RNA sequence: GGGAACGACUCGAGUAGAGUCGAAAACAACAUACAGCCAUUGACACACCCAAAUUUAGGCACGUCAAAUCGGCUAUACAUUGAUAAAUUUUUAGUUAAAGUACUUACAAAUAUACUUGCCUUCAAAUCAUUUGCCUUUGUUCGCAAAGGCAAAUGAAAAAGAAACAACAACAACAAC
Reactivity to 2A3 in 0.01 (KOAc 150mM, MgCl2 10mM, bicine 150mM(pH8.5), 24C), signal-to-noise 2, nucleotides 027 to 126: c000a010a000c020a040u240a010c020a010g020c000c000a020u000u000g000a000c000a000c000a070c040c010c020a000a000a130u190u110u040a080g040g020c120a000c060g010u000c000a000a000a000u230c100g040g010c030u010a000u100a030c020a060u100u220g000a070u260a070a200a280u030u000u000u060u110a020g040u010u070a060a040a040g060u000a010c030u170u180a100c130a090a040a100u040a000u000a050c040u000u010g020c010c030u040u110c030a040a000a070
Reactivity to DMS in 0.01 (KOAc 150mM, MgCl2 10mM, bicine 150mM(pH8.5), 24C), signal-to-noise 1, nucleotides 027 to 126: c020a300a090c110a070u000a000c100a090g030c110c000a200u000u000g020a000c070a240c110a300c260c000c070a070a070a300u000u000u000a300g040g000c040a070c300g010u000c000a000a000a130u000c050g000g000c000u000a000u040a000c090a070u000u000g030a110u000a000a000a300u000u070u080u000u040a020g000u000u020a130a000a030g020u000a000c070u000u000a080c070a000a090a240u030a000u060a060c000u090u000g090c090c030u000u000c170a000a150a090
Structure probing data (2A3 and DMS) for a 177-nucleotide construct. DMS adducts were read by reverse transcription with MarathonRT. 2A3 is a SHAPE reagent: it acylates the 2'-hydroxyl of flexible nucleotides of all four kinds. The reactions ran in a buffer of 150 mM KOAc, 10 mM MgCl2 and 150 mM bicine (pH 8.5), at 24 C. For 2A3, 655 sequencing reads were counted.